[RMDB]
RNA sequence: GGGAACGACUCGAGUAGAGUCGAAAAAAUGACGUUCGCGUCAUUGAAUUGGGGUCACAAUCGGAGGUUUAGACAUGCUCUGAAGCCUCCACGGAGCAACAGCUAAACUCCCCACCUUUGUGACGGAGGCACCCUGAGCCGGAACUUCGGUUCCGAAGAUUCCUAUCUUUUUCGAAAGAUAGGAAUCAAAAGAAACAACAACAACAAC
Reactivity to 2A3 in 0.01 (KOAc 150mM, MgCl2 10mM, bicine 150mM(pH8.5), 24C), signal-to-noise 4, nucleotides 027 to 156: a000a000u000g020a010c020g030u090u040c260g060c000g110u010c000a000u010u030g050a100a100u180u160g080g000g040g010u020c010a010c010a040a060u130c090g030g030a070g030g030u130u200u040a030g060a100c080a090u070g000c000u000c000u010g070a080a050g020c010c000u000c000c000a010c000g000g000a000g010c010a040a160c060a170g110c050u080a080a120a120c080u140c030c020c020c020a140c020c040u070u070u060g010u010g020a020c050g010g010a020g020g000c010a040c010c020c000u060g040a030g120c060c010g010g000a010a000c000u080u040c250g160g000u000u030c010c000g010a030a010
Reactivity to DMS in 0.01 (KOAc 150mM, MgCl2 10mM, bicine 150mM(pH8.5), 24C), signal-to-noise 1, nucleotides 027 to 156: a050a000u000g020a040c010g020u000u000c300g020c040g040u000c020a020u000u010g020a060a130u020u000g010g000g020g010u000c030a010c050a040a040u010c010g020g030a040g000g030u000u000u000a080g020a090c050a300u000g020c040u010c000u010g000a020a080g030c000c000u000c010c030a100c120g020g000a080g020c010a060a120c160a090g000c000u000a020a100a070c050u040c000c030c000c020a110c100c060u000u000u010g020u000g030a080c010g040g000a080g030g020c010a070c000c010c000u010g010a200g020c060c040g010g000a050a050c020u020u010c230g050g000u000u000c000c020g010a110a130